[RMDB]
The record gives the reactivity of an RNA of 207 nucleotides to DMS and 2A3. The reactions ran in a buffer of 150 mM KOAc, 10 mM MgCl2 and 150 mM bicine (pH 8.5), at 24 C. Values cover nucleotides 27 to 156. DMS adducts were read by reverse transcription with MarathonRT. It was measured as part of the RMDB library M2RFPK. For DMS, 2,405 sequencing reads were counted. For 2A3 the reverse transcriptase was SuperScript II with manganese.
RNA sequence: GGGAACGACUCGAGUAGAGUCGAAAAAGGUGCAUGCCGAGGUGCGGUAGGCCUCGUUAACAAAACGCAAAAAAAUAGUCGCAAACGACGAAAACUACGCACUCGCAGCUUAAUAACCUGCGCUGAGAAAACCCGACUACCUUCGGGUAGUCGGGAAGAUCAAAACUAUCUUCGGAUAGUUUUGAUCAAAAGAAACAACAACAACAAC
Reactivity to DMS in 0.01 (KOAc 150mM, MgCl2 10mM, bicine 150mM(pH8.5), 24C), signal-to-noise 1, nucleotides 027 to 156: a050g010g020u000g030c070a120u010g000c030c010g040a080g010g000u000g000c040g010g010u010a060g030g010c070c050u010c000g030u000u000a100a180c030a090a120a080a020c020g030c060a000a000a020a110a050a120a270u000a070g000u000c000g050c020a050a120a100c090g020a050c020g000a050a020a030a100c010u000a030c000g030c000a020c010u000c020g020c030a060g010c050u010u000a070a060u010a120a100c170c000u000g010c030g060c060u000g000a130g000a130a050a100a080c000c010c010g000a040c010u000a010c000c010u000u000c300g040g020g080u000a010g010u000c000g020g010g000a000a000
Reactivity to 2A3 in 0.01 (KOAc 150mM, MgCl2 10mM, bicine 150mM(pH8.5), 24C), signal-to-noise 4, nucleotides 027 to 156: a010g070g000u060g000c070a090u070g070c100c040g020a070g010g110u060g020c070g050g050u040a020g000g030c020c010u000c010g010u020u070a080a060c070a050a110a050a040c070g050c100a100a100a010a010a010a010a100u180a060g060u090c040g020c110a080a070a040c040g020a000c010g010a040a000a050a000c010u030a010c010g000c020a020c000u020c000g010c000a030g000c010u050u060a060a020u060a120a150c010c000u040g010c050g020c100u060g020a040g070a120a080a040a020c000c000c000g000a000c000u010a000c000c000u010u010c120g060g000g000u000a010g000u000c000g000g000g000a000a000